Conditions: 150 mM KOAc, 10 mM MgCl2 and 150 mM bicine (pH 8.5), 24 C. The record gives the reactivity of an RNA of 177 nucleotides to 2A3 and DMS. Values are in units of 0.01, from 0 to 300, in steps of 10. Reactivities are given for positions 27 through 126. For DMS, 1,395 sequencing reads were counted. For 2A3 the reverse transcriptase was SuperScript II with manganese. For 2A3, 1,938 sequencing reads were counted. High 2A3 reactivity points to a flexible backbone, as in loops and unpaired stretches.

RNA sequence: GGGAACGACUCGAGUAGAGUCGAAAAUGUGUAACAACUCACGGGCCGAAUGAACUAGCCCUGAAAAUGGAUGGCGCUCAAGCGUGCUACCCAUACCUCGCCGUCGGGGUAGAAACGAAGCCCCGACCCCAGACGUGAUUUUCGAAUCACGUCUGGGAAAAGAAACAACAACAACAAC
Reactivity to 2A3 in 0.01 (KOAc 150mM, MgCl2 10mM, bicine 150mM(pH8.5), 24C), signal-to-noise 3, nucleotides 027 to 126: u140g050u000g050u120a070a030c010a030a000c050u030c050a030c010g000g010g000c050c010g090a080a220u110g090a100a060c030u060a080g000c000c000c000u030g020a080a060a000a020u000g000g030a020u030g010g010c000g010c000u100c180a200a040g040c070g030u090g140c010u020a030c000c000c000a010u030a080c010c000u050c050g050c080c060g000u010c000g000g020g000g000u010a050g190a040a150a010c070g020a030a000g030c000c000c000c000g000a000c000
Reactivity to DMS in 0.01 (KOAc 150mM, MgCl2 10mM, bicine 150mM(pH8.5), 24C), signal-to-noise 2, nucleotides 027 to 126: u050g050u030g010u030a110a010c080a120a020c020u010c030a080c200g000g000g000c020c010g000a140a280u000g000a030a160c190u000a030g000c010c000c000u010g000a020a000a060a090u020g020g000a120u000g020g000c000g020c070u000c280a150a190g000c220g020u020g010c000u000a040c000c000c000a050u000a010c050c050u000c100g000c090c160g000u000c010g110g000g000g010u000a040g000a100a120a100c230g010a150a100g000c000c000c000c020g000a010c030